[RMDB]
RNA sequence: GGGAACGACUCGAGUAGAGUCGAAAAGCGCGCUUUAGGGACCGGAGAGCUGGCACACGACCGCAGGGCGACCUGCGCGAUGCCCACACCACACACUCCGCCCCGCGCCUGGUGAACCGACCCGGGUCCUUAUUAGCCUGUUCGCAGGCUAAUAAGGAAAAGAAACAACAACAACAAC
Reactivity to 2A3 in 0.01 (KOAc 150mM, MgCl2 10mM, bicine 150mM(pH8.5), 24C), signal-to-noise 5, nucleotides 027 to 126: g030c030g000c010g010c050u150u170u230a100g010g010g020a050c120c040g030g010a010g010a010g050c160u140g010g000c010a030c000a030c060g060a070c030c020g000c010a000g000g000g050c060g050a100c000c000u000g000c010g000c010g020a040u050g000c000c050c010a000c000a020c010c040a050c000a000c000a020c050u010c000c010g020c020c010c000c000g010c000g010c000c010u080g030g010u100g050a080a060c020c030g030a040c010c000c000g060g010g050u020
Reactivity to DMS in 0.01 (KOAc 150mM, MgCl2 10mM, bicine 150mM(pH8.5), 24C), signal-to-noise 3, nucleotides 027 to 126: g050c020g040c010g040c280u020u000u040a130g000g000g010a080c230c010g030g020a050g010a100g050c100u040g010g000c010a030c150a030c080g010a190c300c010g000c000a010g020g000g000c210g010a200c000c000u000g000c000g000c010g000a240u010g000c070c000c090a090c060a060c030c060a050c090a130c220a120c000u000c050c020g000c050c020c000c030g000c000g000c040c000u000g000g000u000g010a120a120c050c060g000a100c030c000c050g020g020g000u000